[RMDB]
RNA sequence: GGGAACGACUCGAGUAGAGUCGAAAAAUAUGACAUCAUUUUUAUUAACGUGAGGACUCCCUACCGACACCACCAUUACCAACAGUGCGAGGACCAUGCGAUCCACCACAGCAUGCUUACUAGAAAACCAUUCUAUUGCUUUCGAGCAAUAGAAUGGAAAAGAAACAACAACAACAAC
Reactivity to 2A3 in 0.01 (KOAc 150mM, MgCl2 10mM, bicine 150mM(pH8.5), 24C), signal-to-noise 2, nucleotides 027 to 126: a000u130a070u090g060a040c020a080u080c060a070u010u050u010u070u210a200u190u100a140a040c070g010u050g060a010g030g040a050c020u000c010c010c010u030a050c010c030g060a020c000a010c000c020a000c000c030a050u070u060a020c010c000a050a060c030a030g030u040g060c060g030a040g010g040a020c000c040a040u060g000c030g000a020u050c040c000a030c030c010a030c020a010g030c010a020u030g040c020u060u050a100c010u050a020g160a060a080a000a020
Reactivity to DMS in 0.01 (KOAc 150mM, MgCl2 10mM, bicine 150mM(pH8.5), 24C), signal-to-noise 2, nucleotides 027 to 126: a120u020a110u000g020a070c070a110u020c040a030u000u000u000u000u000a070u000u000a080a070c150g000u000g000a060g000g020a140c080u000c040c010c040u000a090c050c040g040a070c070a050c020c020a040c050c010a030u000u000a100c030c030a090a050c080a090g010u000g010c050g020a050g000g000a080c060c010a040u010g010c050g020a090u010c030c030a060c050c080a050c090a150g010c030a020u020g010c040u010u000a070c030u010a040g010a050a040a090a100